[RMDB]
RNA sequence: GGGAACGACUCGAGUAGAGUCGAAAAGGCUGAAGGACAUCGGGAUGAAAACCUCUUUCAGCAGGGACGAAGCGUGAGUGUCGAUACCUGAAGAAGAUGCACCGGCUAACUACGUACCAACAGCCGCUAUAAUAUUGAUAUUCGUAUCAAUAUUAUAAAAAGAAACAACAACAACAAC
Reactivity to 2A3 in 0.01 (KOAc 150mM, MgCl2 10mM, bicine 150mM(pH8.5), 24C), signal-to-noise 9, nucleotides 027 to 126: g030g000c000u010g010a010a010g010g000a020c010a090u080c050g030g010g040a090u130g110a060a040a060a080c010c010u030c000u020u070u040c020a050g000c000a000g010g010g000a010c010g010a030a010g050c040g040u120g070a100g020u100g010u020c010g010a050u110a150c010c000u010g010a030a040g030a020a000g020a030u040g020c020a020c020c000g010g000c020u010a050a010c030u080a050c060g050u060a160c000c010a000a010c000a010g000c000c000g000c000
Reactivity to DMS in 0.01 (KOAc 150mM, MgCl2 10mM, bicine 150mM(pH8.5), 24C), signal-to-noise 9, nucleotides 027 to 126: g010g020c000u000g000a030a260g010g000a060c070a120u020c040g010g000g000a150u030g010a100a080a100a170c080c060u000c010u000u020u010c040a060g010c010a030g000g010g000a150c020g010a050a080g010c030g000u050g010a140g010u050g000u000c010g000a080u030a140c010c010u000g000a080a080g010a030a020g010a050u010g010c080a140c050c020g000g000c140u020a080a080c160u020a080c140g010u010a090c020c020a030a300c040a020g000c010c000g020c140
Structure probing data (2A3 and DMS) for a 177-nucleotide construct. The 2A3 profile rests on 22,077 reads. For DMS the reverse transcriptase was MarathonRT. It was measured as part of the RMDB library OK1LIB. The reactions ran in a buffer of 150 mM KOAc, 10 mM MgCl2 and 150 mM bicine (pH 8.5), at 24 C. For 2A3 the reverse transcriptase was SuperScript II with manganese.